[RMDB]
RNA sequence: GGGAACGACUCGAGUAGAGUCGAAAAUAGGUGGGUGCCCGGAGCGGUCUACGCCUUCUACGGGAUGUGGCCUCUCCUCCUGCUCCUGCUGGCGUUGCCUCAGCGGGCAUACGCACUGGACACGGAGGCCUAAGUAGGUGUUCGCACCUACUUAGGCAAAAGAAACAACAACAACAAC
Reactivity to DMS in 0.01 (KOAc 150mM, MgCl2 10mM, bicine 150mM(pH8.5), 24C), signal-to-noise 2, nucleotides 027 to 126: u020a070g000g050u020g010g010g020u010g030c000c120c050g020g010a070g000c300g000g060u010c020u050a040c130g030c000c030u010u040c110u000a140c190g000g030g000a060u000g040u000g020g000c030c040u030c030u000c000c000u010c010c020u020g000c160u000c010c030u000g000c100u020g010g000c000g050u000u000g000c000c000u010c100a180g060c300g010g000g000c010a040u050a030c000g020c010a100c050u010g000g000a040c030a110c150g030g020a050g020
Reactivity to 2A3 in 0.01 (KOAc 150mM, MgCl2 10mM, bicine 150mM(pH8.5), 24C), signal-to-noise 4, nucleotides 027 to 126: u130a030g070g000u070g030g060g010u070g010c030c000c000g030g010a030g020c060g020g010u030c080u100a010c020g040c020c000u160u120c100u140a080c080g060g020g020a150u120g050u040g050g010c010c000u010c000u000c000c010u030c010c010u030g000c080u000c000c000u030g050c080u040g030g020c010g030u020u020g010c000c010u050c090a120g060c190g060g000g000c010a090u210a090c000g010c010a020c020u040g030g010a020c030a020c090g020g010a020g030

Overview
This 177-nucleotide RNA was probed chemically with DMS and 2A3. The RNA was probed in 150 mM KOAc, 10 mM MgCl2 and 150 mM bicine (pH 8.5) at 24 C. The data come from the RNA Mapping Database (RMDB), library OK1LIB. The DMS profile rests on 3,019 reads. For 2A3, 2,758 sequencing reads were counted.